An RNA of 207 nucleotides, treated with 2A3 and DMS and read out base by base. The RNA was probed in 150 mM KOAc, 10 mM MgCl2 and 150 mM bicine (pH 8.5) at 24 C. Reactivities are rounded to 0.1 and cut off at 0 and 3.
[RMDB]
RNA sequence: GGGAACGACUCGAGUAGAGUCGAAAAACAACAGAUAGCUGGAACCAGCGUAGAAUUCUACGCAUAUCCAUAGCGAAUGGUACCUGUAAAGAAAAUAACUUUGGAUGUACAAGUACCAACAGCCGAGGAUGCCAUGGUGAUGUCAAUCACAUAUGCAUCACCUUUUAAAUUUCGAUUUAAAAGGUGAAAAAGAAACAACAACAACAAC
Reactivity to 2A3 in 0.01 (KOAc 150mM, MgCl2 10mM, bicine 150mM(pH8.5), 24C), signal-to-noise 6, nucleotides 027 to 156: a010c030a000a020c020a010g110a130u110a040g060c050u040g030g010a100a090c040c040a030g000c000g000u010a000g060a140a300u300u080c010u010a000c000g000c000a000u040a020u080c020c010a050u120a020g010c000g040a040a060u030g000g000u010a010c010c000u000g040u030a050a080a010g080a030a080a020a050u140a050a060c070u140u080u060g080g030a040u060g000u040a010c000a020a010g000u000a000c000c000a010a020c060a070g020c010c010g020a030g050g000a000u030g010c030c010a040u070g030g030u020g010a020u040g090u160c060a050a040u060c000a020c010a050u130a040u130g020c010a020
Reactivity to DMS in 0.01 (KOAc 150mM, MgCl2 10mM, bicine 150mM(pH8.5), 24C), signal-to-noise 3, nucleotides 027 to 156: a080c040a040a100c040a100g010a160u000a050g020c050u010g030g010a120a130c090c050a120g010c020g010u000a020g000a270a160u000u000c000u000a010c030g030c010a160u000a060u000c020c000a100u000a080g010c040g010a140a300u010g010g040u000a020c010c000u000g020u000a020a010a070g010a300a060a080a070u000a130a100c160u010u000u000g030g000a300u000g020u000a020c010a050a040g030u000a020c000c000a040a060c110a190g000c020c020g020a220g010g000a050u000g020c090c090a080u010g010g050u010g000a040u010g010u010c190a070a120u000c040a020c060a060u000a090u020g030c060a210